[RMDB]
RNA sequence: GGGAACGACUCGAGUAGAGUCGAAAAAUAGGCCAGCAUUAACCUCUAGGCGUACUGGCAUUAGGUACAGUAGAAUUGGUAAUAAACAAACACUACGUACUCGUAGUGGAAAAUCUAUAGGUGCUAACCAAGUAUGGUCUUUCGAGACCAUACUUGGAAAAGAAACAACAACAACAAC
Reactivity to 2A3 in 0.01 (KOAc 150mM, MgCl2 10mM, bicine 150mM(pH8.5), 24C), signal-to-noise 5, nucleotides 027 to 126: a010u140a040g090g000c010c010a030g020c040a070u150u210a090a070c010c040u110c080u130a130g060g040c080g040u080a030c020u010g040g000c010a020u070u110a030g030g000u040a010c010a020g020u050a020g040a080a120u040u120g140g030u240a110a070u150a140a240a060c090a090a030a020c030a000c000u010a000c000g090u100a100c040u040c260g010u010a020g000u030g000g010a050a090a000a070u010c020u020a030u070a060g110g030u020g010c020u030a030a040
Reactivity to DMS in 0.01 (KOAc 150mM, MgCl2 10mM, bicine 150mM(pH8.5), 24C), signal-to-noise 3, nucleotides 027 to 126: a060u010a090g030g000c000c000a030g050c070a070u040u030a190a150c070c000u030c080u060a110g020g060c120g000u030a050c020u000g000g030c030a110u010u030a090g010g020u000a020c010a180g000u000a030g000a100a070u000u020g000g000u010a160a140u050a070a110a090c110a070a060a090c010a030c000u000a010c000g030u040a160c300u010c010g030u000a000g020u020g000g010a030a030a080a040u000c030u020a010u000a020g010g030u010g020c030u010a050a280